[RMDB]
Conditions: 150 mM KOAc, 10 mM MgCl2 and 150 mM bicine (pH 8.5), 24 C. The record gives the reactivity of an RNA of 177 nucleotides to DMS and 2A3. The DMS profile rests on 1,336 reads.
RNA sequence: GGGAACGACUCGAGUAGAGUCGAAAAGCAAUGGCCGUGGGCUCACAAUUCCAGCACGGCGAUGUCAUGGGCAGCUGGCUGCCCUUGCACCAUGACAUGGGGCUGGUGGGCAGCCUAUUCGCCGCACCCGAGAUUCAGUGUUCGCACUGAAUCUCGGAAAAGAAACAACAACAACAAC
Reactivity to DMS in 0.01 (KOAc 150mM, MgCl2 10mM, bicine 150mM(pH8.5), 24C), signal-to-noise 2, nucleotides 027 to 126: g000c100a120a060u000g050g000c000c030g000u000g000g000g050c120u000c190a150c230a050a170u060u000c050c100a040g030c020a100c000g080g000c010g000a090u000g010u000c110a160u010g000g000g000c000a070g030c210u000g010g030c000u000g020c000c000c010u000u010g000c070a010c010c000a030u010g000a180c040a300u000g000g000g010g000c000u070g020g000u010g030g000g120c000a030g000c000c000u000a000u070u060c230g010c000c000g000c150a050c130
Reactivity to 2A3 in 0.01 (KOAc 150mM, MgCl2 10mM, bicine 150mM(pH8.5), 24C), signal-to-noise 3, nucleotides 027 to 126: g040c010a030a290u080g110g000c010c080g040u030g000g020g000c020u070c040a130c030a080a170u120u160c060c030a100g000c040a050c050g080g000c040g010a070u060g000u090c060a140u070g080g000g010c000a020g000c050u090g000g000c010u050g020c050c020c000u020u050g000c040a030c000c000a050u140g100a170c010a100u110g000g050g020g000c000u070g030g090u050g040g070g000c010a020g000c000c000u020a030u020u080c130g010c000c010g000c020a040c000